[RMDB]
RNA sequence: GGGAACGACUCGAGUAGAGUCGAAAAGAAAUUUUGUCAGUGACGAGACCACGGAACCUGCGCCAGGCAUGGCGCCUGAUCAGUUAUGAAGAUAGUUUCCAUGCUGCCUUCCUUCUGAGACGAGUAAACGAAUCUGUUACUUCGGUAACAGAUUCGUAAAAGAAACAACAACAACAAC
Reactivity to 2A3 in 0.01 (KOAc 150mM, MgCl2 10mM, bicine 150mM(pH8.5), 24C), signal-to-noise 3, nucleotides 027 to 126: g110a010a030a020u020u030u070u140g090u040c060a070g020u050g070a070c170g030a010g070a120c010c010a040c040g040g010a040a150c000c030u010g010c000g040c010c000a060g050g060c090a140u110g070g000c010g000c010c010u080g000a080u020c020a040g030u060u110a100u130g040a030a010g000a080u030a040g010u020u050u090c070c110a090u260g010c010u010g000c010c000u000u000c010c000u020u020c020u120g100a070g050a050c110g030a010g050u180a020a220
Reactivity to DMS in 0.01 (KOAc 150mM, MgCl2 10mM, bicine 150mM(pH8.5), 24C), signal-to-noise 2, nucleotides 027 to 126: g020a110a060a070u000u020u020u000g000u020c000a080g000u000g010a110c090g050a000g000a040c060c060a070c030g000g000a060a070c060c060u000g010c010g000c000c010a050g000g030c220a080u020g040g000c030g000c050c060u020g020a170u020c000a030g000u030u020a090u000g020a150a090g000a010u000a010g040u020u020u050c020c070a080u030g000c040u000g060c030c010u000u000c000c010u000u030c140u000g000a050g010a020c010g000a060g000u000a050a010
This 177-nucleotide RNA was probed chemically with 2A3 and DMS. For 2A3 the reverse transcriptase was SuperScript II with manganese. For DMS the reverse transcriptase was MarathonRT. Conditions: 150 mM KOAc, 10 mM MgCl2 and 150 mM bicine (pH 8.5), 24 C. The data come from the RNA Mapping Database (RMDB), library RFM100.